RNA sequence: GGGAACGACUCGAGUAGAGUCGAAAAGGAGGACGAAGCAUAUUUCUGUUUCUGGAGGAUUAUUUAUAAUCUGCCGGAAAGUCUUGCAGGUGGCUGGGAUAUGUUCAGUCUGGUAGGAUUAAGCACGAAAACGUGUCCUUGUUCGCAAGGACACGAACCUACUCACUUAGUUCGCUAAGUGAGUAGGAAAAGAAACAACAACAACAAC
Reactivity to 2A3 in 0.01 (KOAc 150mM, MgCl2 10mM, bicine 150mM(pH8.5), 24C), signal-to-noise 3, nucleotides 027 to 156: g050g020a030g000g010a010c010g040a060a000g030c020a030u060a070u060u070u060c080u130g090u040u030u000c010u030g010g020a030g010g000a010u020u030a020u030u230u040a100u050a050a020u010c000u050g080c040c000g000g010a030a030a010g040u000c040u130u110g040c040a040g040g080u050g030g030c030u040g010g000g040a040u010a010u080g070u100u040c040a000g020u000c030u030g030g050u060a020g020g000a050u110u100a080a000g050c070a040c170g080a020a030a070a050c010g000u000g000u000c000c000u020u000g000u040u050c070g000c110a020a010g000g040a000c010a000c000g000a000a000
Reactivity to DMS in 0.01 (KOAc 150mM, MgCl2 10mM, bicine 150mM(pH8.5), 24C), signal-to-noise 1, nucleotides 027 to 156: g040g010a100g020g010a040c030g000a130a150g000c040a050u000a020u000u000u010c010u010g040u000u000u050c000u000g020g030a020g010g010a020u000u000a030u000u010u010a070u000a070a020u000c000u010g010c000c000g010g010a030a030a080g000u000c030u000u000g000c090a120g040g010u010g010g010c030u010g010g010g010a080u000a030u000g000u000u000c020a150g020u000c030u020g030g030u000a050g000g000a100u010u010a020a060g000c040a080c100g010a080a050a130a160c010g040u010g000u000c000c000u000u020g000u010u000c270g020c030a020a010g000g000a050c000a000c000g000a010a050